[RMDB]
RNA sequence: GGGAACGACUCGAGUAGAGUCGAAAAAUACACAAAACUUUCAUAGUUAUCACUCAAUCUCUCAUUCAUUGGUAUAGCUUUAUUUUAUGCCCUUUUUUCUUCCAAAAAUCAUUCAGUGAAACCAAAGCUGAGGUGUGUGAAAGCCCAAGGAGAAAUACUAAAUAGCUCAUUUCGAUGAGCUAUUUAGAAAAGAAACAACAACAACAAC
Reactivity to 2A3 in 0.01 (KOAc 150mM, MgCl2 10mM, bicine 150mM(pH8.5), 24C), signal-to-noise 3, nucleotides 027 to 156: a000u090a000c050a010c040a070a110a270a080c050u100u220u180c090a100u110a120g020u030u080a050u090c040a010c040u180c030a060a090u020c070u000c020u030c090a090u210u040c040a030u000u130g000g000u030a040u040a070g020c000u060u130u100a070u040u210u120u050a040u130g040c010c000c000u020u090u050u100u040u040c040u140u080c030c020a050a050a040a070a140u170c030a080u060u110c010a020g010u010g040a100a040a000c020c010a060a030a030g000c010u010g000a010g020g030u020g000u000g010u000g050a100a050a040g000c010c010c010a000a000g070g010a040g040a020a070a030u200a010
Reactivity to DMS in 0.01 (KOAc 150mM, MgCl2 10mM, bicine 150mM(pH8.5), 24C), signal-to-noise 1, nucleotides 027 to 156: a130u010a050c030a070c030a060a050a100a070c030u000u030u010c070a090u010a070g020u000u020a070u000c060a040c030u000c010a070a080u010c010u000c020u000c070a150u000u010c040a110u000u000g020g030u010a070u000a090g010c070u010u000u000a080u020u000u000u010a060u010g010c000c020c020u020u000u000u010u010u000c030u000u000c010c030a030a080a070a100a060u000c020a070u000u000c030a020g030u000g000a090a050a150c070c080a010a060a190g040c080u000g010a040g000g030u000g010u000g020u000g020a080a060a130g000c020c010c020a050a100g000g000a140g000a040a040a060u000a150